[RMDB]
RNA sequence: GGGAACGACUCGAGUAGAGUCGAAAAGAUAUGGAGCUCCCUAAGAGCUAUGAAGUAUGGGAGUCGGAAACGACGAACAUAUGGAGCUUAUGGGAGCUCCUAAGUCAAACAGCGCUUCGGCGCUGAACGUAUGGAGGAUGUUCGCAUCCUCCAUACGAAAAGAAACAACAACAACAAC
Reactivity to DMS in 0.01 (KOAc 150mM, MgCl2 10mM, bicine 150mM(pH8.5), 24C), signal-to-noise 3, nucleotides 027 to 126: g000a030u000a300u010g000g000a040g050c000u000c000c000c000u000a120a140g040a000g010c030u010a120u000g000a200a190g000u000a000u010g040g000g000a300g020u000c000g010g000a050a050a120c000g010a020c010g010a300a300c020a020u000a020u000g010g010a040g010c020u040u010a300u000g000g010g000a040g000c010u010c000c000u000a000a000g040u000c040a190a120a300c010a010g000c000g010c000u000u040c200g000g000c000g010c000u000g010a030a130
Reactivity to 2A3 in 0.01 (KOAc 150mM, MgCl2 10mM, bicine 150mM(pH8.5), 24C), signal-to-noise 1, nucleotides 027 to 126: g020a010u060a060u110g000g000a030g000c010u040c050c010c010u080a300a050g020a030g120c000u090a300u300g010a020a010g000u000a010u000g030g000g010a060g020u020c000g000g030a080a070a000c000g020a000c000g010a020a000c010a000u010a020u030g020g000a000g030c010u030u000a070u180g000g030g000a000g000c000u000c000c000u010a000a000g030u010c000a010a000a090c000a000g000c010g000c010u090u100c260g170g040c000g020c040u000g000a020a010